[RMDB]
Source information
The data come from the RNA Mapping Database (RMDB), library OK1LIB. Structure probing data (DMS and 2A3) for a 177-nucleotide construct. The reactions ran in a buffer of 150 mM KOAc, 10 mM MgCl2 and 150 mM bicine (pH 8.5), at 24 C. The DMS profile rests on 3,640 reads. DMS adducts were read by reverse transcription with MarathonRT. The 2A3 profile rests on 820 reads.
RNA sequence: GGGAACGACUCGAGUAGAGUCGAAAAAUCCGGAAAACGAGUUGAUGUAUGGAGCCGGACAGUCGAGUUCGCAUGUUGCGGCGCGGGAUGCGUUUUCCUGUUAUCGGCGAGUGAAGAACAACCGGAAGGGUAAUUUUAUCUUCGGAUAAAAUUACCCAAAAGAAACAACAACAACAAC
Reactivity to DMS in 0.01 (KOAc 150mM, MgCl2 10mM, bicine 150mM(pH8.5), 24C), signal-to-noise 2, nucleotides 027 to 126: a060u000c010c010g010g000a100a040a110a100c130g010a090g020u000u000g020a070u040g020u050a080u030g030g000a300g040c010c010g000g010a000c030a050g020u030c110g000a010g040u000u000c000g000c000a020u000g010u000u000g000c050g020g000c120g020c010g000g010g010a040u000g000c020g000u000u020u010u000c010c000u000g010u000u000a050u030c000g000g000c010g000a190g020u010g000a130a100g000a140a010c030a140a040c000c010g000g010a050a100
Reactivity to 2A3 in 0.01 (KOAc 150mM, MgCl2 10mM, bicine 150mM(pH8.5), 24C), signal-to-noise 2, nucleotides 027 to 126: a000u010c000c000g050g010a010a040a100a160c080g080a110g130u000u030g000a080u090g050u110a060u000g010g050a000g000c000c040g000g000a000c030a000g020u060c010g010a000g010u040u020c000g010c010a000u020g110u300u160g090c110g110g000c000g000c020g040g040g000a010u040g020c000g000u070u000u020u000c000c000u010g000u030u050a200u070c000g000g000c020g010a040g030u050g000a030a140g010a010a010c000a000a000c030c000g000g010a000a040